[RMDB]
RNA sequence: GGGAACGACUCGAGUAGAGUCGAAAAUUUUUGAUCCAUUUGGUCUGGCAUUGAAUCACGUUCCAUCAUCAGGCUCGGCGGAUAGUUGCCGGGUUUAUCCGUAUCAAGACACCCGGUCAAGACAGUUAGAGAACCAAAUUUUCGAAUUUGGUUCUCUAAAAGAAACAACAACAACAAC
Reactivity to DMS in 0.01 (KOAc 150mM, MgCl2 10mM, bicine 150mM(pH8.5), 24C), signal-to-noise 2, nucleotides 027 to 126: u000u010u000u030u000g000a090u010c060c000a030u020u020u000g000g000u010c010u000g020g020c150a050u000u000g000a130a020u030c110a100c060g000u030u000c000c040a060u040c070a060u010c070a000g000g000c060u000c090g070g020c080g030g000a040u030a090g040u010u000g020c000c000g000g020g000u000u000u010a000u010c030c030g020u000a150u010c190a100a060g010a080c210a040c010c000c010g000g000u020c190a070a060g000a120c060a030g000u030u010
Reactivity to 2A3 in 0.01 (KOAc 150mM, MgCl2 10mM, bicine 150mM(pH8.5), 24C), signal-to-noise 3, nucleotides 027 to 126: u190u080u000u000u100g100a070u040c010c000a020u030u030u120g060g010u030c040u020g040g050c090a040u030u190g020a100a060u100c070a060c170g090u050u010c010c020a030u040c000a000u050c000a040g000g030c010u020c040g040g000c010g020g020a050u060a070g100u060u120g000c000c000g020g000g010u020u050u010a040u020c000c030g030u060a090u210c070a070a020g080a030c000a020c020c000c000g000g010u010c000a010a010g070a040c030a010g010u020u050